Conditions: 150 mM KOAc, 10 mM MgCl2 and 150 mM bicine (pH 8.5), 24 C. This 177-nucleotide RNA was probed chemically with DMS and 2A3. For DMS the reverse transcriptase was MarathonRT. It was measured as part of the RMDB library VIROID. The 2A3 profile rests on 1,476 reads.

[RMDB]
RNA sequence: GGGAACGACUCGAGUAGAGUCGAAAAGUCCACUCGACUAAACACGCACUCCAGGGAAGAGUCAAAAGUACCACCCUGUGUCUUGUCUCCUCAUGGUGUCGAAGCAAUGGCGGAGUCCUAGGCACCACAUGUAGCCAUUCUUCGGAAUGGCUACAUGAAAAGAAACAACAACAACAAC
Reactivity to DMS in 0.01 (KOAc 150mM, MgCl2 10mM, bicine 150mM(pH8.5), 24C), signal-to-noise 2, nucleotides 027 to 126: g000u000c020c070a180c120u000c080g000a070c050u000a050a050a090c040a120c070g020c080a030c050u000c080c030a020g010g000g010a080a100g000a120g010u000c080a100a050a130a060g020u020a060c020c050a160c000c030c030u000g000u000g000u000c020u000u010g000u000c020u000c010c070u010c120a120u000g000g040u000g000u000c030g010a220a100g000c140a020a100u020g010g000c090g010g000a100g010u000c010c030u010a070g020g000c010a020c010c040a100
Reactivity to 2A3 in 0.01 (KOAc 150mM, MgCl2 10mM, bicine 150mM(pH8.5), 24C), signal-to-noise 2, nucleotides 027 to 126: g040u000c040c020a040c120u080c020g060a010c020u100a080a080a020c070a020c060g030c040a020c020u050c040c030a020g110g000g080a160a030g090a080g060u030c020a030a200a000a070g040u090a110c010c010a020c010c020c000u030g010u010g060u080c020u010u050g010u000c020u030c020c020u130c000a080u040g010g000u000g030u030c040g050a110a000g030c050a020a080u170g030g010c120g050g100a070g010u100c020c000u030a020g020g000c000a030c020c000a010